[RMDB]
RNA sequence: GGGAACGACUCGAGUAGAGUCGAAAACAUGGAGUCUUCGGACUCCAUGCACUACCGAAAUAAUGCGUCGGUAUAAAAGGCAAACCCUUGGAAACAAGGGAACGAUGUCACGAUUCGUCGUGACAAAACACACCUGCUAAUUCGUUAGCAGGUGUGUAAAAGAAACAACAACAACAAC
Reactivity to DMS in 0.01 (KOAc 150mM, MgCl2 10mM, bicine 150mM(pH8.5), 24C), signal-to-noise 3, nucleotides 027 to 126: c000a000u000g000g010a010g020u010c000u000u000c220g000g020a040c010u010c000c000a010u000g000c060a120c120u000a060c030c020g010a080a060a040u020a070a110u000g030c170g010u000c020g030g000u000a070u010a050a060a070a090g000g000c100a040a100a100c000c000c000u000u000g000g000a120a120a170c000a000a000g000g010g000a030a030c120g020a140u010g010u000c000a010c000g000a040u000u010c120g000u000c010g020u000g000a020c010a000a020a110
Reactivity to 2A3 in 0.01 (KOAc 150mM, MgCl2 10mM, bicine 150mM(pH8.5), 24C), signal-to-noise 3, nucleotides 027 to 126: c010a010u000g000g010a020g000u040c030u050u040c190g090g010a000c000u000c010c000a010u000g000c000a010c020u050a010c010c000g020a030a070a040u260a080a060u190g090c060g070u010c000g020g020u010a020u070a180a160a020a010g140g000c070a070a020a210c010c000c000u000u000g010g010a040a040a020c000a010a000g000g010g000a000a020c030g050a060u110g000u000c000a000c000g020a010u040u060c170g050u010c010g000u110g010a010c030a020a000a040
Structure probing data (DMS and 2A3) for a 177-nucleotide construct. 2A3 adducts were read by reverse transcription with SuperScript II with manganese. The reactions ran in a buffer of 150 mM KOAc, 10 mM MgCl2 and 150 mM bicine (pH 8.5), at 24 C.